[RMDB]
RNA sequence: GGGAACGACUCGAGUAGAGUCGAAAAGAUGUUAUUUGGUGUGCGUACAUCGGGUGGCACAACUUUUACUAUGACGCAUCAUGGUGGAAGUGAACUCGUGGCUUGAUGCGUCAAGUUAUGAGUGAUCUUUGUUACUGUACGCACAGUGAUAAAGAAACGAGUGGUCUAUGUUCGCAUAGACCAUUCGAAAAGAAACAACAACAACAAC
Reactivity to DMS in 0.01 (KOAc 150mM, MgCl2 10mM, bicine 150mM(pH8.5), 24C), signal-to-noise 5, nucleotides 027 to 156: g000a130u000g010u000u000a020u000u010u000g020g020u000g010u000g010c070g030u000a030c020a080u000c090g030g020g020u000g000g010c040a050c050a070a040c020u010u000u000u000a030c020u000a070u000g010a090c180g030c160a080u000c010a030u000g020g030u020g000g000a050a060g010u000g000a080a060c030u000c020g030u000g010g000c020u000u000g010a030u000g030c210g030u000c010a010a010g000u000u000a020u000g000a040g020u000g000a090u000c050u000u000u000g020u000u000a020c020u000g010u010a050c120g030c070a040c000a020g000u000g010a050u000a020a050a080g010a070a120a200
Reactivity to 2A3 in 0.01 (KOAc 150mM, MgCl2 10mM, bicine 150mM(pH8.5), 24C), signal-to-noise 9, nucleotides 027 to 156: g150a080u150g020u210u080a140u110u140u190g130g030u030g020u010g020c020g010u010a000c010a060u080c140g100g020g000u040g020g010c030a020c020a110a070c020u020u030u020u030a020c020u020a060u120g020a020c070g030c120a120u020c010a010u060g040g020u000g010g060a060a050g020u060g100a050a030c010u020c050g050u050g040g000c010u000u010g000a000u010g020c050g070u000c000a000a000g000u010u030a020u040g020a000g020u040g070a090u030c050u030u070u030g020u010u040a030c020u050g000u000a000c010g000c000a000c010a000g000u000g010a020u070a060a110a020g040a050a080a020
Annotation
Source: RMDB library OK3TST, as collected in RNAgym. The record gives the reactivity of an RNA of 207 nucleotides to DMS and 2A3. The 2A3 profile rests on 11,224 reads.